[RMDB]
RNA sequence: GGGAACGACUCGAGUAGAGUCGAAAACGACCGGCCUGGCCCGCGACGUCAACCCGGUGGGCAUGCCGUGGCAGGAGCCCGACGACGUGGCGUCCUGGGGCCGGGUCGAUCUGGGCGCAGCGAUCGACGCAUGUUGCGAAUUCGUUCGCAACAUGCGAAAAGAAACAACAACAACAAC
Reactivity to 2A3 in 0.01 (KOAc 150mM, MgCl2 10mM, bicine 150mM(pH8.5), 24C), signal-to-noise 1, nucleotides 027 to 126: c050g040a020c030c000g080g000c000c010u000g010g040c010c010c000g050c040g020a000c010g010u010c020a090a130c020c000c040g030g030u100g010g000g030c020a020u140g010c000c040g180u190g170g000c070a030g030g170a070g000c020c030c000g020a020c080g030a010c050g020u030g010g010c000g010u030c020c000u120g100g000g010g050c000c010g000g010g030u000c000g000a000u000c010u050g010g070g050c000g020c070a100g010c030g110a110u140c060g080a050
Reactivity to DMS in 0.01 (KOAc 150mM, MgCl2 10mM, bicine 150mM(pH8.5), 24C), signal-to-noise 2, nucleotides 027 to 126: c130g030a040c050c000g000g000c010c010u030g000g000c000c000c000g000c300g000a010c010g010u000c010a090a080c040c040c010g010g000u020g000g000g030c010a050u000g000c000c030g020u010g020g020c120a110g000g010a220g020c000c000c010g010a060c020g020a060c280g030u000g000g000c020g010u000c000c040u000g050g040g010g000c000c000g010g000g000u000c000g000a000u000c010u010g040g000g020c060g000c030a050g000c060g010a050u000c040g010a190
This 177-nucleotide RNA was probed chemically with 2A3 and DMS. For DMS the reverse transcriptase was MarathonRT. The RNA was probed in 150 mM KOAc, 10 mM MgCl2 and 150 mM bicine (pH 8.5) at 24 C. High 2A3 reactivity points to a flexible backbone, as in loops and unpaired stretches. For 2A3, 1,784 sequencing reads were counted.